The record gives the reactivity of an RNA of 177 nucleotides to 2A3 and DMS. For DMS, 1,249 sequencing reads were counted. DMS (dimethyl sulfate) methylates the pairing face of unpaired adenines and cytosines. The data come from the RNA Mapping Database (RMDB), library OK1LIB. For DMS the reverse transcriptase was MarathonRT. The RNA was probed in 150 mM KOAc, 10 mM MgCl2 and 150 mM bicine (pH 8.5) at 24 C. For 2A3, 857 sequencing reads were counted.
[RMDB]
RNA sequence: GGGAACGACUCGAGUAGAGUCGAAAACAAACGGCUAUGGUGCUCUCAAGUGGAUGGCGUGCUCUGAUACGCUGUUGUCAGCCGGUGCUCGCGACCCCUAACGUGAGUGCCUCUGACAAGCAAGAGCCGCAAAAUACCGCUUCGGCGGUAUUUUGCGAAAAGAAACAACAACAACAAC
Reactivity to 2A3 in 0.01 (KOAc 150mM, MgCl2 10mM, bicine 150mM(pH8.5), 24C), signal-to-noise 2, nucleotides 027 to 126: c030a000a090a050c060g090g020c000u010a050u240g070g010u020g110c000u000c050u030c060a110a080g120u060g150g080a060u110g000g000c030g020u090g000c020u000c030u110g070a140u100a230c030g000c030u080g090u140u010g000u000c000a000g070c090c080g020g000u000g000c000u000c000g020c000g070a130c000c000c000c040u040a160a010c000g000u000g000a000g000u040g000c000c000u010c010u000g000a000c010a000a000g030c040a040a000g020a040g060c020
Reactivity to DMS in 0.01 (KOAc 150mM, MgCl2 10mM, bicine 150mM(pH8.5), 24C), signal-to-noise 1, nucleotides 027 to 126: c010a120a120a040c070g010g000c140u040a140u000g070g000u000g000c090u000c090u000c090a060a110g000u000g010g000a100u030g040g020c000g040u050g000c050u000c050u000g000a060u000a070c040g000c000u230g000u040u000g010u000c010a010g000c070c250g090g000u000g010c000u000c000g000c010g030a120c060c020c010c050u020a070a240c030g000u000g000a000g060u000g000c000c000u020c000u000g000a000c000a090a110g000c000a020a030g000a010g040c000